[RMDB]
RNA sequence: GGGAACGACUCGAGUAGAGUCGAAAACUGAAGGGCUUAAGUCCCAAGGAGAAUCGGGAGAUUCCGCCUCUCCGCUACGAGGUGGUACAGCGGCUCAAGGGGGAUUUCCCCGCUCUACCCGUGGUUACCCUUACAUCGUUUUCGAACGAUGUAAGGGAAAAGAAACAACAACAACAAC
Reactivity to DMS in 0.01 (KOAc 150mM, MgCl2 10mM, bicine 150mM(pH8.5), 24C), signal-to-noise 3, nucleotides 027 to 126: c020u000g030a180a200g030g010g010c050u000u000a170a160g030u000c000c000c010a130a140g010g010a060g020a050a070u010c080g010g000g010a120g000a050u000u000c000c000g010c000c010u000c190u010c010c020g000c040u020a100c160g000a100g000g030u000g000g000u010a130c190a030g000c030g000g000c300u010c140a080a050g010g030g000g000g010a090u000u000u000c000c000c000c150g000c020u000c030u000a110c040c010c000g030u010g000g000u000u000a190
Reactivity to 2A3 in 0.01 (KOAc 150mM, MgCl2 10mM, bicine 150mM(pH8.5), 24C), signal-to-noise 3, nucleotides 027 to 126: c040u070g040a140a120g040g000g000c090u240u220a180a010g060u160c010c000c000a020a020g050g000a040g040a110a110u210c080g020g000g010a050g000a020u030u090c020c050g240c080c000u000c010u020c000c030g000c000u020a030c040g080a060g100g130u150g030g010u090a040c030a020g030c000g030g000c040u020c140a020a030g000g000g000g000g000a000u010u050u020c000c010c000c020g000c010u020c000u010a040c000c010c010g010u060g030g020u080u120a130